[RMDB]
RNA sequence: GGGAACGACUCGAGUAGAGUCGAAAAGAACGAUCACACGAGAUCGAGUGAUCACUCUCGUACACGUGAUCACACUCGAACACGUACUCGAGUGUGAUCGUUCACGAACACACUCGAUCGAGUACGUACUCGUGAGUACACGAACGUUCACUCUCGACCUGAGCUGCCGAUUCGUCGGCAGCUCAGGAAAAGAAACAACAACAACAAC
Reactivity to 2A3 in 0.01 (KOAc 150mM, MgCl2 10mM, bicine 150mM(pH8.5), 24C), signal-to-noise 1, nucleotides 027 to 156: g000a030a010c010g000a020u000c000a010c000a000c070g050a000g000a040u000c000g000a000g020u000g000a020u020c010a030c050u080c000u100c050g050u130a070c190a030c090g000u000g000a000u000c030a000c000a020c060u000c000g000a040a050c000a010c130g130u130a030c070u030c070g020a020g020u000g000u020g000a000u010c000g000u020u040c000a000c010g030a030a000c070a000c030a000c040u000c010g050a080u040c030g010a020g000u020a070c010g030u020a020c000u000c000g110u050g070a020g040u130a070c070a010c080g090a120a000c060g040u000u000c030a030c070u040c000u040c090g090a080

An RNA of 207 nucleotides, treated with 2A3 and read out base by base. Reactivities are rounded to 0.1 and cut off at 0 and 3. The data come from the RNA Mapping Database (RMDB), library OK3TST. Conditions: 150 mM KOAc, 10 mM MgCl2 and 150 mM bicine (pH 8.5), 24 C. For 2A3 the reverse transcriptase was SuperScript II with manganese. Reactivities are given for positions 27 through 156.